[RMDB]
The record gives the reactivity of an RNA of 207 nucleotides to 2A3. It was measured as part of the RMDB library OK3TST.
RNA sequence: GGGAACGACUCGAGUAGAGUCGAAAAGUGAGAGUACGUGUGAACGUGAGUACGUGUUCGAUCACGAACUCUCUCGAUCGAACUCGUUCGAGUGUUCGAGAACUCUCGAACUCGAUCUCUCGAUCACACGAUCGUGAGAGUACGUGUUCGUACUCUCGCGGCAUCUUCGUUUCGACGAAGAUGCCGCAAAAGAAACAACAACAACAAC
Reactivity to 2A3 in 0.01 (KOAc 150mM, MgCl2 10mM, bicine 150mM(pH8.5), 24C), signal-to-noise 3, nucleotides 027 to 156: g220u150g010a020g000a000g000u020a000c030g010u060g060u140g100a030a010c020g020u050g070a090g150u220a120c090g000u050g020u030u040c050g030a160u060c010a010c000g000a020a010c010u000c000u000c000u000c020g000a000u000c000g020a020a070c060u100c220g010u010u020c000g000a000g000u050g020u010u000c000g000a010g000a040a090c100u110c090u120c300g030a040a020c000u000c010g040a040u020c030u000c000u000c000g000a010u020c020a020c010a010c090g000a000u000c010g000u020g000a010g000a000g000u020a030c010g010u010g000u030u030c000g000u000a000c000u000c000u000c020